This 177-nucleotide RNA was probed chemically with 2A3 and DMS.

[RMDB]
RNA sequence: GGGAACGACUCGAGUAGAGUCGAAAAGCGAUCGAAUGGCUGGAUAACGUAAGAGAGGUCAACCCAGAGCCCGUGAAAAGGCGAGCACACUGUCCGUACCGAGAUCCGACACAGGUACUCGUGGCGGGUGUCCAAUCCAUUUCGAUGGAUUGGACACAAAAGAAACAACAACAACAAC
Reactivity to 2A3 in 0.01 (KOAc 150mM, MgCl2 10mM, bicine 150mM(pH8.5), 24C), signal-to-noise 5, nucleotides 027 to 126: g020c020g030a050u050c030g030a060a050u130g080g000c010u050g000g050a060u050a180a040c040g080u100a190a000g060a000g020a020g090g030u050c020a050a050c030c000c000a030g020a020g020c000c020c010g060u060g060a060a050a060a020g040g000c000g010a030g020c020a010c000a010c090u070g030u080c020c020g010u030a240c000c000g010a010g000a080u020c000c000g140a060c070a020c040a190g040g020u140a160c000u010c030g020u080g030g000c020g030g000
Reactivity to DMS in 0.01 (KOAc 150mM, MgCl2 10mM, bicine 150mM(pH8.5), 24C), signal-to-noise 3, nucleotides 027 to 126: g020c070g000a040u010c020g030a080a080u010g010g020c010u010g010g000a100u010a010a080c120g020u000a110a060g010a110g000a120g000g010u000c020a090a060c050c020c040a090g010a180g010c020c000c010g030u000g000a070a110a100a120g010g020c040g000a180g000c080a010c100a070c060u010g000u040c040c030g000u020a100c060c000g000a050g010a200u020c020c010g000a130c250a050c210a130g000g000u020a120c050u000c010g010u020g000g020c040g010g010
Annotation
For DMS the reverse transcriptase was MarathonRT. The RNA was probed in 150 mM KOAc, 10 mM MgCl2 and 150 mM bicine (pH 8.5) at 24 C.